RNA sequence: GGGAACGACUCGAGUAGAGUCGAAAAGCGUACUACGACUCGGGAGUAGCAGUGGCUUGGAUUUAACUUUCCCAAAUAGGAAAGUUUGUCAGCCACUGAACUACUAUUAACGAGUCGUAUCGCAAAACGAAGACCGUGAUUCGUCACGGUCUUCGAACUUAGAAUGCAUGUUCGCAUGCAUUCUAAGAAAAGAAACAACAACAACAAC
Reactivity to 2A3 in 0.01 (KOAc 150mM, MgCl2 10mM, bicine 150mM(pH8.5), 24C), signal-to-noise 4, nucleotides 027 to 156: g020c000g040u120a090c060u010a000c030g010a000c000u000c010g020g030g010a020g000u000a010g000c000a000g000u010g010g010c020u070u170g130g000a040u280u220u160a000a010c000u020u000u030c000c000c030a140a290a130u190a040g000g000a000a000a000g000u010u010u000g010u000c010a000g000c000c030a000c020u030g010a000a010c010u010a000c000u020a110u230u220a120a040c000g000a000g020u000c000g000u000a000u010c000g000c010a000a000a000a120c010g000a000a000g000a000c010c000g010u000g000a030u010u140c250g010u000c120a000c000g000g000u000c000u000u000c000g000a000a000
Reactivity to DMS in 0.01 (KOAc 150mM, MgCl2 10mM, bicine 150mM(pH8.5), 24C), signal-to-noise 2, nucleotides 027 to 156: g020c020g040u000a030c080u000a030c000g000a000c000u000c010g020g020g010a070g020u000a020g010c000a040g020u010g000g000c000u010u010g050g040a040u010u000u000a020a020c000u000u010u000c000c000c000a060a170a200u020a060g010g000a030a020a010g010u000u000u000g020u000c010a060g010c010c000a010c020u000g000a020a130c020u000a020c010u000a100u000u010a100a130c000g010a010g010u000c000g010u020a000u000c010g020c030a090a050a110a180c010g020a050a010g010a020c000c000g030u000g020a100u000u020c300g020u000c010a010c010g000g000u000c000u010u000c010g010a020a070